Structure probing data (2A3 and DMS) for a 177-nucleotide construct.
RNA sequence: GGGAACGACUCGAGUAGAGUCGAAAAUCGUGCAGUAAGUUGAUGGGGUCCCAGGUUAUUUUGUCCCGGGACUACGUCAACUACUAGCACGCAAAUGACGCAAGAUCAGUUCGCUGAUCUUGCGUCAGGUUACCUUCUGGUUCGCCAGAAGGUAACCAAAAGAAACAACAACAACAAC
Reactivity to 2A3 in 0.01 (KOAc 150mM, MgCl2 10mM, bicine 150mM(pH8.5), 24C), signal-to-noise 4, nucleotides 027 to 126: u080c000g000u010g000c000a000g000u170a300a030g000u050u000g010a020u010g030g040g010g030u020c000c010c010a010g030g020u130u130a290u180u300u220u290g190u110c000c010c010g000g000g000a010c000u020a030c010g000u010c000a000a000c000u000a000c000u010a060g000c000a000c000g000c010a060a060a040u100g000a000c000g000c010a000a010g000a010u000c000a010g010u070u100c170g050c130u000g000a000u000c000u000u000g000c000g000u000c000a000
Reactivity to DMS in 0.01 (KOAc 150mM, MgCl2 10mM, bicine 150mM(pH8.5), 24C), signal-to-noise 1, nucleotides 027 to 126: u000c010g010u000g000c000a020g010u000a000a050g010u000u000g000a010u010g000g000g010g000u000c000c000c010a040g010g010u010u000a120u000u010u000u030g020u010c010c000c010g000g000g000a010c010u010a000c000g000u000c000a010a020c000u000a000c020u010a200g020c000a020c010g010c300a070a050a140u010g010a020c010g000c000a010a030g000a000u000c000a010g010u000u020c210g010c020u010g000a000u000c000u000u000g000c000g010u000c000a000
About this RNA
The 2A3 profile rests on 4,062 reads.